[RMDB]
RNA sequence: GGGAACGACUCGAGUAGAGUCGAAAACGUGAUGAGGAUACUUUCAAAGCGCCAGCUCAAGGAGCUGGUCCUCUACUCGCCGCAACACGUCGCGCGGCUGGAAAAGGCAGGCCAAUUCCCCAAGCGGUUGAUGUUUAAUAUUCGUAUUAAACAUCAAAAAAGAAACAACAACAACAAC
Reactivity to 2A3 in 0.01 (KOAc 150mM, MgCl2 10mM, bicine 150mM(pH8.5), 24C), signal-to-noise 9, nucleotides 027 to 126: c020g020u040g030a090u070g010a040g040g010a070u100a230c060u070u150u140c090a080a070a020g050c040g010c020c000a000g000c000u010c090a170a160g170g000a000g040c000u000g000g000u010c000c000u000c000u010a030c020u030c050g020c010c010g010c010a030a030c030a020c060g060u070c000g010c010g000c020g060g000c020u030g050g030a060a070a050a050g070g000c030a020g020g020c000c000a020a070u020u030c010c000c000c020a080a040g040c030g050g000
Reactivity to DMS in 0.01 (KOAc 150mM, MgCl2 10mM, bicine 150mM(pH8.5), 24C), signal-to-noise 9, nucleotides 027 to 126: c040g010u000g010a180u010g010a050g010g010a180u020a060c100u020u020u020c090a040a100a180g010c190g000c010c010a010g000c000u000c020a200a160g030g010a020g010c010u000g000g000u000c030c000u000c020u010a080c090u010c090g000c050c010g010c040a090a160c060a060c080g010u010c070g010c140g010c050g000g000c010u000g000g000a060a050a100a090g000g010c070a060g000g000c010c030a050a180u000u000c010c000c000c300a070a100g010c060g010g010